[RMDB]
This 177-nucleotide RNA was probed chemically with 2A3 and DMS. For DMS the reverse transcriptase was MarathonRT. The reactions ran in a buffer of 150 mM KOAc, 10 mM MgCl2 and 150 mM bicine (pH 8.5), at 24 C.

RNA sequence: GGGAACGACUCGAGUAGAGUCGAAAAGUAAAACUCCGAACUCGUCACCGUCGUAGAAGGUUGGAGUGAGGGGCGCGGGGUAAGCUUGUGUCCCGAAAGAGAAACAACUCAGACUAUGGUUAAGGCCAUCUGAGACACAUUUCGAUGUGUCUCAGAUAAAAGAAACAACAACAACAAC
Reactivity to 2A3 in 0.01 (KOAc 150mM, MgCl2 10mM, bicine 150mM(pH8.5), 24C), signal-to-noise 6, nucleotides 027 to 126: g020u040a010a080a070a020c010u000c000c000g010a050a020c000u000c010g240u050c150a010c040c010g040u050c020g060u110a070g060a300a070g110g030u070u120g150g060a120g040u020g000a010g000g020g000g010c040g000c010g000g000g000g000u030a040a080g050c000u020u010g030u020g000u070c000c000c000g000a050a140a000g050a010g010a020a150a010c060a020a070c010u030c060a020g100a130c050u110a090u140g020g010u110u100a050a050g140g000c010c020
Reactivity to DMS in 0.01 (KOAc 150mM, MgCl2 10mM, bicine 150mM(pH8.5), 24C), signal-to-noise 7, nucleotides 027 to 126: g000u000a040a110a150a030c000u000c000c000g010a050a040c010u000c000g000u000c010a010c000c010g010u010c030g010u010a170g010a090a130g000g020u000u030g020g020a050g010u000g000a040g010g030g000g000c300g010c000g000g000g000g010u010a030a300g010c000u000u000g000u020g000u000c000c020c000g010a050a050a110g020a050g010a080a060a090c200a080a080c050u010c050a090g020a080c110u010a070u010g000g000u010u000a140a090g010g000c060c030